[RMDB]
RNA sequence: GGGAACGACUCGAGUAGAGUCGAAAAGAUAUGGACGAUGUGUACCAGCUAUGAAGUAGGCUCGGAAACGAGCCUAUGGAGCUGAACACUGUCGUCCUAAGUCAAAACACCGUCUUCGGACGGUGAACUGAGAUUCUAUCUUCGGAUAGAAUCUCAGAAAAGAAACAACAACAACAAC
Reactivity to DMS in 0.01 (KOAc 150mM, MgCl2 10mM, bicine 150mM(pH8.5), 24C), signal-to-noise 3, nucleotides 027 to 126: g000a050u000a300u010g030g010a010c000g020a020u000g020u000g020u020a140c300c010a000g010c000u000a300u000g000a100a230g000u000a000g000g000c000u010c000g000g000a120a080a110c020g000a010g010c000c000u000a000u000g000g000a000g020c000u000g000a090a050c000a020c030u000g020u010c010g020u000c000c000u000a000a070g000u010c030a070a160a120a270c010a010c000c010g000u000c000u000u010c240g030g000a010c010g010g020u000g010a030a120
Reactivity to 2A3 in 0.01 (KOAc 150mM, MgCl2 10mM, bicine 150mM(pH8.5), 24C), signal-to-noise 3, nucleotides 027 to 126: g030a010u070a040u100g000g010a000c010g000a010u030g050u010g030u130a260c300c040a020g010c010u110a300u300g010a020a010g000u000a010g000g000c000u020c000g000g000a020a050a020c010g010a000g000c040c000u000a000u000g000g000a000g010c010u020g020a030a000c020a000c070u090g090u010c010g010u000c000c010u000a020a010g000u000c010a020a010a150a080c000a000c010c000g000u040c000u020u050c260g190g000a000c020g000g010u020g000a010a000